[RMDB]
RNA sequence: GGGAACGACUCGAGUAGAGUCGAAAAAUUUAGUACAAGCGAGUACACGCAGUAUACUGCUACUUGUGUGAGAAUACUUUUAGUACAAGCGAGUACACGCAGUAUACUGCCACUUGUGUGAGAAUACGCACCCACAGACAUUCGUGUCUGUGGGUGCAAAAGAAACAACAACAACAAC
Reactivity to 2A3 in 0.01 (KOAc 150mM, MgCl2 10mM, bicine 150mM(pH8.5), 24C), signal-to-noise 1, nucleotides 027 to 126: a000u210u250u230a070g010u030a000c010a040a000g010c020g100a010g190u160a000c100a000c010g000c000a000g000u000a000u000a000c000u110g000c000u000a000c000u000u000g010u000g000u160g110a100g280a220a040u000a000c000u000u240u200u300a040g000u010a000c030a070a000g000c000g030a000g000u000a000c010a030c180g040c000a010g000u000a000u000a000c000u000g000c000c060a000c000u050u050g000u010g000u000g000a160g200a100a000u040a010c000